[RMDB]
RNA sequence: GGGAACGACUCGAGUAGAGUCGAAAACACCCACGCGGAGCACAUGCCGCGGAAUAGGCAAAAGUGUUGCGGACCUGCGUAGUUUCGAAAAGCGGACGGCCACGACGGCCCUUUGGGUGGGGUUGCAUCAUGUAGGUUAGUUCGCUAACCUACAUGAAAAAGAAACAACAACAACAAC
Reactivity to DMS in 0.01 (KOAc 150mM, MgCl2 10mM, bicine 150mM(pH8.5), 24C), signal-to-noise 5, nucleotides 027 to 126: c130a130c010c010c010a130c030g010c010g010g000a080g020c140a100c200a100u010g010c020c000g020c050g010g010a080a050u010a090g000g010c040a070a070a070a120g010u000g000u010u010g010c020g010g010a100c030c010u010g000c050g030u000a100g010u000u000u000c100g000a050a040a100a160g040c040g000g010a080c090g010g010c020c010a050c110g000a120c160g010g000c000c010c060u000u000u000g000g000g020u000g010g000g030g000u000u000g000c120a150
Reactivity to 2A3 in 0.01 (KOAc 150mM, MgCl2 10mM, bicine 150mM(pH8.5), 24C), signal-to-noise 3, nucleotides 027 to 126: c070a030c000c020c010a000c000g040c000g000g050a030g050c040a050c020a230u190g020c010c010g000c040g000g010a000a050u140a090g030g000c010a020a040a060a110g040u070g040u100u130g070c030g060g040a130c020c010u040g000c040g030u050a050g050u080u090u140c110g060a080a060a070a030g030c020g000g040a040c030g000g010c000c000a050c040g150a020c030g020g000c030c000c000u070u080u080g060g000g010u040g030g010g020g010u060u070g040c020a050
An RNA of 177 nucleotides, treated with DMS and 2A3 and read out base by base. For DMS, 5,255 sequencing reads were counted. High DMS reactivity at an A or C suggests that its Watson-Crick edge is free.